[RMDB]
RNA sequence: GGGAACGACUCGAGUAGAGUCGAAAAACAAGUGGUGGUAGUCCGCCACUCUAAGGGGACGCCUUUAGAAGAAGAGGCUAGGGGGUAUUCCUGUGUGGGAUACUUAGUAAUAUGCAACGCUAAUUGCUCAAGGAUAGAUGAUUCGUCAUCUAUCCAAACCUAUCUCUGUCUUCGGACAGAGAUAGGUAAAAGAAACAACAACAACAAC
Reactivity to DMS in 0.01 (KOAc 150mM, MgCl2 10mM, bicine 150mM(pH8.5), 24C), signal-to-noise 1, nucleotides 027 to 156: a040c040a070a140g050u000g010g050u000g010g030u000a060g000u000c000c000g000c000c000a050c000u000c000u000a040a030g030g000g000g000a120c150g000c000c020u000u000u000a050g000a090a100g000a080a050g020a150g000g000c040u000a010g000g020g020g020g020u000a020u010u000c000c010u030g030u000g020u000g000g000g040a040u000a000c020u020u000a050g040u000a110a120u000a140u010g010c030a050a120c100g040c040u000a100a100u000u000g000c010u000c100a110a280g010g020a020u010a000g010a040u000g010a100u000u010c300g010u000c000a010u000c000u000a000u000c000c000a030a010
Reactivity to 2A3 in 0.01 (KOAc 150mM, MgCl2 10mM, bicine 150mM(pH8.5), 24C), signal-to-noise 4, nucleotides 027 to 156: a010c190a180a060g000u020g020g000u010g000g080u020a020g010u010c000c000g000c010c000a000c010u000c000u000a010a000g010g010g020g050a050c060g140c010c010u010u020u010a030g000a060a000g010a020a000g070a090g000g000c010u020a030g050g020g000g000g010u010a020u030u040c020c000u080g100u120g050u300g230g010g010a010u020a010c020u040u040a030g040u050a030a150u060a110u300g040c030a060a030c070g030c130u130a140a120u100u060g010c030u080c180a120a140g000g000a000u000a000g010a000u010g000a010u040u020c130g050u000c070a000u000c000u000a000u000c000c000a000a000

The record gives the reactivity of an RNA of 207 nucleotides to DMS and 2A3. It was measured as part of the RMDB library M2RFPK. For DMS, 2,575 sequencing reads were counted. The RNA was probed in 150 mM KOAc, 10 mM MgCl2 and 150 mM bicine (pH 8.5) at 24 C. DMS adducts were read by reverse transcription with MarathonRT.